[RMDB]
RNA sequence: GGGAACGACUCGAGUAGAGUCGAAAACUUGUUAAGUCUUCUCGUCUAUUUGCGACAGAUAGGGCGUAGUUAGGAUAUAAUUGUCGUGUAGAUAUGUCAGGACAGGAACUCCUUGGCGGGUGGCAAGCCAUGCUCGUAGAUUCGUCUACGAGCAUGGAAAAGAAACAACAACAACAAC
Reactivity to 2A3 in 0.01 (KOAc 150mM, MgCl2 10mM, bicine 150mM(pH8.5), 24C), signal-to-noise 3, nucleotides 027 to 126: c000u000u000g000u050u090a060a030g020u010c010u030u000c010u030c010g030u000c030u030a040u000u080u190g050c010g020a020c020a080g080a070u130a040g090g050g000c000g020u000a030g020u000u110a010g000g040a030u000a020u030a070a210u040u040g000u000c050g020u040g020u030a030g040a160u110a050u100g050u030c070a020g010g010a030c000a000g010g030a000a020c010u000c000c020u000u040g010g020c000g000g000g020u010g020g000c000a010a010g010
Reactivity to DMS in 0.01 (KOAc 150mM, MgCl2 10mM, bicine 150mM(pH8.5), 24C), signal-to-noise 3, nucleotides 027 to 126: c060u000u010g010u010u020a070a090g000u010c050u000u010c030u000c050g000u000c010u000a030u030u000u020g040c030g000a040c050a060g000a100u030a050g000g010g000c040g000u030a040g010u010u000a070g000g000a090u000a090u020a080a070u020u000g000u000c000g010u010g000u000a050g010a050u010a050u010g020u010c070a060g000g000a030c080a060g000g000a130a120c110u010c040c000u000u000g010g000c040g000g010g000u010g000g000c040a090a130g010

Structure probing data (2A3 and DMS) for a 177-nucleotide construct. The DMS profile rests on 6,880 reads. Conditions: 150 mM KOAc, 10 mM MgCl2 and 150 mM bicine (pH 8.5), 24 C. The 2A3 profile rests on 4,424 reads.